[RMDB]
Structure probing data (DMS and 2A3) for a 177-nucleotide construct. DMS adducts were read by reverse transcription with MarathonRT. The 2A3 profile rests on 1,989 reads. In probing experiments dimethyl sulfate is read out at A N1 and C N3, which are open when not base-paired.
RNA sequence: GGGAACGACUCGAGUAGAGUCGAAAAGAUAUGGAACGAAUUUCGUUGUCAGAGUUACUAUCGGAAACGAUAGUUGCUCUUGGAUUUACGAAACUAUUCCUAAGUCAAAGCGUGCUUCGGCACGCAAGUACUUGCGAAUCUUCGGAUUCGCAAGUACAAAAGAAACAACAACAACAAC
Reactivity to DMS in 0.01 (KOAc 150mM, MgCl2 10mM, bicine 150mM(pH8.5), 24C), signal-to-noise 1, nucleotides 027 to 126: g000a040u000a300u010g020g000a020a010c090g020a050a090u000u000u000c020g000u000u010g000u000c000a070g010a020g020u000u000a000c000u000a020u010c000g000g000a130a050a190c000g030a020u000a010g010u000u000g010c010u000c000u000u000g010g030a030u010u020u000a030c010g030a030a000a000c060u000a300u010u000c000c000u000a090a150g000u010c070a130a080a130g000c020g030u000g000c030u000u020c270g030g010c050a000c000g040c000a000a030
Reactivity to 2A3 in 0.01 (KOAc 150mM, MgCl2 10mM, bicine 150mM(pH8.5), 24C), signal-to-noise 2, nucleotides 027 to 126: g030a020u090a040u160g010g020a010a010c120g110a300a300u000u000u000c020g000u020u000g040u060c010a000g000a010g030u020u040a000c000u000a010u020c000g000g030a130a000a050c020g010a000u010a000g020u000u010g000c000u000c000u010u090g090g000a040u210u270u180a000c010g030a000a010a000c020u030a030u040u010c000c000u020a150a050g040u030c090a080a070a000g000c000g000u000g000c000u060u140c270g050g000c000a000c020g000c000a000a000